[RMDB]
RNA sequence: GGGAACGACUCGAGUAGAGUCGAAAAGGAGUGAAUUGCAAAGUGGCACGGAUGGUUUGAUACGAGUGCCGCGAUUAAUCCGUCCUGAGUUCGCUCAGGACGGAUUAUUGCGGUGUAAACCAUCACUAGCCGUGACGAUCUUCGGAUCGUCACGGCUAAAAGAAACAACAACAACAAC
Reactivity to 2A3 in 0.01 (KOAc 150mM, MgCl2 10mM, bicine 150mM(pH8.5), 24C), signal-to-noise 1, nucleotides 027 to 126: g080g070a180g000u040g010a040a180u080u100g070c140a110a010a160g030u080g060g070c000a080c120g050g000a000u030g000g040u020u000u090g300a300u250a130c100g080a090g130u120g020c040c000g000c000g000a000u060u180a000a000u030c000c000g000u000c000c000u000g000a010g040u110u000c300g000c090u000c000a000g000g000a000c000g000g000a000u000u000a000u000u000g000c000g000g000u000g030u020a020a000a000c000c000a000u000c010a000c010u000
Source: RMDB library OK1LIB, as collected in RNAgym. An RNA of 177 nucleotides, treated with 2A3 and read out base by base. 2A3 adducts were read by reverse transcription with SuperScript II with manganese. For 2A3, 562 sequencing reads were counted. Values are in units of 0.01, from 0 to 300, in steps of 10.